[RMDB]
RNA sequence: GGGAACGACUCGAGUAGAGUCGAAAAGAAAGAAAGGGCCAAUUUCUCUGAGCGAGCAAUGAAGUAAUAUUUGUUCGACCUGAUAUAACAAAUAAGACUUUUUUGGUCGUUAGCAGGAAUUGUCCAAUGCAGAUACUAAAUUCGUUUAGUAUCUGCAAAAAGAAACAACAACAACAAC
Reactivity to 2A3 in 0.01 (KOAc 150mM, MgCl2 10mM, bicine 150mM(pH8.5), 24C), signal-to-noise 9, nucleotides 027 to 126: g110a020a090a010g130a060a110a030g050g000g000c050c040a010a010u010u020u000c050u000c010u040g060a030g050c000g000a010g090c000a000a010u010g000a010a000g010u010a010a050u000a010u020u010u010g040u020u050c100g120a210c060c060u080g110a060u080a040u060a210a010c000a000a000a000u020a020a020g040a020c000u010u010u020u010u010u010g180g050u050c000g010u010u020a010g040c070a000g020g000a010a010u000u000g000u000c000c000a000a000
Reactivity to DMS in 0.01 (KOAc 150mM, MgCl2 10mM, bicine 150mM(pH8.5), 24C), signal-to-noise 6, nucleotides 027 to 126: g010a140a110a110g000a070a130a080g000g000g000c050c020a000a020u010u000u000c000u000c030u010g010a090g010c000g010a010g000c000a010a010u000g000a000a000g010u000a020a040u000a010u000u000u000g000u000u000c150g010a150c190c160u010g000a130u020a080u020a010a010c000a010a000a000u000a020a060g010a010c010u000u000u000u000u000u000g000g010u000c000g010u010u010a060g000c260a030g000g000a010a020u000u000g000u000c010c010a080a100